[RMDB]
Source information: Structure probing data (DMS and 2A3) for a 177-nucleotide construct.
RNA sequence: GGGAACGACUCGAGUAGAGUCGAAAAGAUAUGGAAUUUGUACUCGCCAUUGCGAAGAACUCGGAAACGAGGGAGCAAUGGAACUACGAGGACAAAUUCCUAAGUCAAACGCUACUUCGGUAGCGAAGUUACCAAGUAUCUUCGGAUACUUGGUAACAAAAGAAACAACAACAACAAC
Reactivity to DMS in 0.01 (KOAc 150mM, MgCl2 10mM, bicine 150mM(pH8.5), 24C), signal-to-noise 6, nucleotides 027 to 126: g000a050u000a300u010g000g000a010a010u000u000u000g010u000a010c000u000c010g010c010c010a010u000u000g010c010g000a070a110g020a070a150c010u000c010g000g010a120a080a250c010g000a020g000g000g010a060g010c000a010a000u000g000g000a040a010c110u000a300c010g010a010g000g000a020c000a000a000a010u000u000c000c000u000a020a090g000u000c030a090a100a180c010g010c000u000a000c000u000u010c190g020g000u000a000g010c000g000a010a030
Reactivity to 2A3 in 0.01 (KOAc 150mM, MgCl2 10mM, bicine 150mM(pH8.5), 24C), signal-to-noise 5, nucleotides 027 to 126: g020a010u060a060u160g000g020a000a000u010u000u010g000u010a020c000u000c000g000c010c000a010u000u010g010c030g170a300a040g020a160a100c000u000c000g020g020a060a060a040c010g000a000g010g020g000a070g000c000a000a010u010g010g030a010a000c020u190a030c030g000a000g000g000a000c000a010a010a000u000u010c000c000u010a050a010g010u000c030a090a050a080c020g000c000u000a000c000u040u070c300g120g000u010a000g000c000g010a030a010
For DMS the reverse transcriptase was MarathonRT. High DMS reactivity at an A or C suggests that its Watson-Crick edge is free.